[RMDB]
An RNA of 207 nucleotides, treated with DMS and 2A3 and read out base by base. Source: RMDB library RNAMAK, as collected in RNAgym. The RNA was probed in 150 mM KOAc, 10 mM MgCl2 and 150 mM bicine (pH 8.5) at 24 C.
RNA sequence: GGGAACGACUCGAGUAGAGUCGAAAAUCCUAAGUCCAAUUCAUUAUAUAGAGGUGAGGGACAUGCCUCGGAAACGAGGCAACAGCCCUCACUCCCCACCUAUAUACCUCGGGAAUUGGAUAUGGAAAAACCAGUCUUACUUCGGUAAGACUGGUAAUACACGAUGUAGAUUCGUCUACAUCGUGUAAAAAGAAACAACAACAACAAC
Reactivity to DMS in 0.01 (KOAc 150mM, MgCl2 10mM, bicine 150mM(pH8.5), 24C), signal-to-noise 2, nucleotides 027 to 156: u030c000c010u000a080a230g030u000c010c000a000a030u000u000c010a240u000u000a030u000a110u010a020g000a230g050g020u000g000a060g010g010g040a060c040a300u000g000c020c000u030c000g000g010a150a140a260c000g010a010g000g000c000a000a010c030a110g020c020c010c000u000c020a050c010u010c160c040c020c050a300c100c000u010a050u000a030u000a010c180c080u000c100g020g020g000a020a010u000u000g010g020a050u020a190u010g020g000a040a090a100a120a040c000c000a020g010u010c000u000u010a010c010u010u010c300g000g000u000a000a010g010a030c010u000g000g000u000a000a060
Reactivity to 2A3 in 0.01 (KOAc 150mM, MgCl2 10mM, bicine 150mM(pH8.5), 24C), signal-to-noise 3, nucleotides 027 to 156: u010c000c000u040a110a030g020u010c010c000a010a000u010u010c010a040u100u080a010u000a000u000a020g010a020g010g020u010g000a010g010g010g020a030c050a150u040g000c010c000u010c010g010g000a100a100a030c010g010a000g010g010c000a010a000c010a000g000c010c000c000u000c000a000c000u000c000c010c000c000a020c000c010u000a000u000a000u020a080c080c160u200c150g290g090g000a000a000u000u010g000g010a000u020a060u070g010g020a100a080a000a020a000c010c010a000g000u000c000u000u010a010c010u040u130c290g060g000u000a000a000g000a000c000u000g000g000u010a000a000
Values cover nucleotides 27 to 156.